Annotation: Source: RMDB library OK2TRN, as collected in RNAgym. Chemical mapping of a 177-nucleotide RNA with DMS and 2A3.
[RMDB]
RNA sequence: GGGAACGACUCGAGUAGAGUCGAAAAUGGGUUAAGAAGCUGCGUGAAGUCAUGCAGGAGACCUGCUUCUCGGGCACCUCGUUGACCUUGCCCAAGUCUCCAGCUAAACAUUCGGGCUCCUCGCAACGGUAAUCAAGUGAUUCGUCACUUGAUUACCAAAAGAAACAACAACAACAAC
Reactivity to DMS in 0.01 (KOAc 150mM, MgCl2 10mM, bicine 150mM(pH8.5), 24C), signal-to-noise 5, nucleotides 027 to 126: u000g010g000g000u000u010a100a090g010a030a050g000c050u020g010c030g050u000g000a070a040g020u010c050a070u000g010c020a060g000g010a060g010a050c020c040u000g010c050u000u000c020u010c300g010g000g000c010a070c040c180u010c120g020u010u000g000a070c040c020u010u000g000c040c090c010a080a160g000u010c000u000c010c020a060g050c030u000a060a070a090c180a140u000u020c140g000g000g000c010u000c010c010u000c020g010c090a110a100c220
Reactivity to 2A3 in 0.01 (KOAc 150mM, MgCl2 10mM, bicine 150mM(pH8.5), 24C), signal-to-noise 4, nucleotides 027 to 126: u060g020g000g030u090u100a070a040g020a040a030g020c050u070g010c030g030u030g030a050a020g040u070c020a080u070g010c010a010g000g000a010g010a010c010c020u030g020c010u040u000c030u020c000g000g000g030c010a020c020c130u140c070g040u060u070g200a300c020c000u010u060g010c020c000c000a000a010g000u000c010u000c000c010a010g000c000u070a150a160a070c040a100u110u220c030g030g020g010c000u000c000c010u000c020g000c010a030a090c060